[RMDB]
RNA sequence: GGGAACGACUCGAGUAGAGUCGAAAAGAUAUGGAAUAACAAGGCUGAUGACCGUAUUUAAAUAUUGAUACAUCGGAAACGAUGUAUCAGAGGUAAAUACGCAAGGCCUUAAGUUAUUCCUAAGUCAGUAAUUUCAACACUUCGGUGUUGAAAUUACAAAAGAAACAACAACAACAAC
Reactivity to DMS in 0.01 (KOAc 150mM, MgCl2 10mM, bicine 150mM(pH8.5), 24C), signal-to-noise 1, nucleotides 027 to 126: g030a010u000a130u010g000g000a040a020u000a000a010c000a080a150g020g030c000u000g000a040u000g000a080c300c000g010u010a000u000u000u000a070a110a140u010a120u020u010g010a020u000a000c000a000u000c000g000g060a010a020a040c000g010a020u000g020u010a010u000c000a000g000a110g020g000u010a000a000a000u000a010c000g000c010a030a030g010g030c010c000u000u000a030a140g020u010u010a020u000u000c000c000u000a000a100g000u000c010a140